[RMDB]
RNA sequence: GGGAACGACUCGAGUAGAGUCGAAAAUUGUGAAGGAAGAUGAAUGCUUUGAUUAUGCAUGAAUCCAUAAUGAUAAAGUGCUAUUGAAUGAUCAAGUAAUUUGUAAGGUUUUUAUUAUCUUCGCAAGCUUGUAAACAAACUUCGGUUUGUUUACAAGAAAAGAAACAACAACAACAAC
Reactivity to 2A3 in 0.01 (KOAc 150mM, MgCl2 10mM, bicine 150mM(pH8.5), 24C), signal-to-noise 4, nucleotides 027 to 126: u040u010g010u010g000a010a000g040g030a010a120g030a060u070g010a030a010u000g010c010u070u060u040g010a020u030u070a030u110g000c000a010u070g020a030a020u000c010c020a080u250a120a110u230g020a000u030a040a110a020g030u010g030c010u040a060u230u140g100a120a040u110g010a020u060c010a000a010g010u050a110a240u000u060u080g100u070a060a080g060g020u040u000u110u000u020a050u030u040a050u040c000u000u000c000g000c010a000a030g040
Reactivity to DMS in 0.01 (KOAc 150mM, MgCl2 10mM, bicine 150mM(pH8.5), 24C), signal-to-noise 5, nucleotides 027 to 126: u000u000g010u010g000a030a010g000g000a130a170g010a040u010g010a050a020u000g010c020u000u000u000g020a040u010u000a050u000g000c010a020u000g010a300a020u000c010c150a120u010a160a070u020g000a030u010a030a080a160g010u000g000c020u000a210u010u010g010a110a100u000g000a040u000c020a030a050g010u000a060a060u000u000u000g010u010a060a090g010g010u010u000u000u000u000a040u010u010a120u020c000u000u000c010g000c020a010a050g000